RNA sequence: GGGAACGACUCGAGUAGAGUCGAAAAACUCCAGUUUGCUGAUGGUACCACAGCGAUGGUCCCAGUUACUAUCACUAUUGCUCCCAUGGCCACUGAAUUUGGCGGUCUGCGCACUGCGGUAACACAAGGUUUGCCAACUGUACCAGGACCUGGCUCAGUUCAAGGUAGUGUUCGCACUACCUUGAACAAAAGAAACAACAACAACAAC
Reactivity to 2A3 in 0.01 (KOAc 150mM, MgCl2 10mM, bicine 150mM(pH8.5), 24C), signal-to-noise 2, nucleotides 027 to 156: a000c080u070c020c020a070g000u040u090u160g030c030u060g020a120u080g050g080u140a080c020c020a020c030a130g130c140g120a230u020g020g000u030c000c020c010a020g020u080u100a030c030u070a060u210c010a020c060u110a090u090u230g010c010u010c010c020c030a050u030g010g010c000c020a030c020u060g000a080a110u150u110u060g030g000c000g000g030u000c030u050g060c070g030c030a040c070u100g030c040g040g010u030a050a020c050a020c080a210a090g030g030u050u050u060g000c000c000a040a070c020u010g010u080a060c010c000a030g070g000a030c030c000u030g050g000c000u010c080a050
Reactivity to DMS in 0.01 (KOAc 150mM, MgCl2 10mM, bicine 150mM(pH8.5), 24C), signal-to-noise 1, nucleotides 027 to 156: a060c030u010c030c030a160g020u000u000u000g050c020u130g030a160u030g010g010u000a080c090c040a130c060a030g060c030g010a190u000g010g000u010c020c010c060a130g040u010u000a110c080u000a100u000c020a070c030u000a160u010u000g010c020u000c070c000c010a120u000g020g000c020c060a200c060u010g000a140a130u000u000u000g000g050c010g040g040u000c010u010g060c080g070c100a080c050u000g000c270g050g070u000a030a040c020a130c080a130a120g020g000u000u020u000g020c030c050a050a090c060u020g020u010a050c060c040a170g000g030a050c050c060u020g000g000c020u000c050a190
An RNA of 207 nucleotides, treated with 2A3 and DMS and read out base by base. It was measured as part of the RMDB library OK3TST. Reactivities are given for positions 27 through 156. The 2A3 profile rests on 1,137 reads. Conditions: 150 mM KOAc, 10 mM MgCl2 and 150 mM bicine (pH 8.5), 24 C.